[RMDB]
RNA sequence: GGGAACGACUCGAGUAGAGUCGAAAAAGGAAUGACAGCAAGAUGAAAAAAACUCUUACAGUGACGGUUUCGUCAGUGUUAGCUUUUUUAGCUUUAAAUAAUGCAGCACAUGCACAACAACAUGGCAAGGAAUUGAUGCUUUCGAGCAUCAAUUCCUAAAAGAAACAACAACAACAAC
Reactivity to 2A3 in 0.01 (KOAc 150mM, MgCl2 10mM, bicine 150mM(pH8.5), 24C), signal-to-noise 2, nucleotides 027 to 126: a000g180g010a140a020u070g060a000c030a040g060c000a010a060g110a210u190g220a070a020a010a020a010a020a020c010u060c000u050u050a000c000a100g010u000g030a000c000g220g030u160u290u300c030g030u000c000a040g080u020g000u000u000a030g000c060u000u150u030u000u000u010a010g090c000u120u180u070a050a130a000u190a080a020u150g030c030a000g040c030a020c020a140u100g020c110a000c080a050a140c020a000a000c020a080u000g070g000c000a050

Source: RMDB library OK1LIB, as collected in RNAgym. The record gives the reactivity of an RNA of 177 nucleotides to 2A3. The reactions ran in a buffer of 150 mM KOAc, 10 mM MgCl2 and 150 mM bicine (pH 8.5), at 24 C. For 2A3 the reverse transcriptase was SuperScript II with manganese.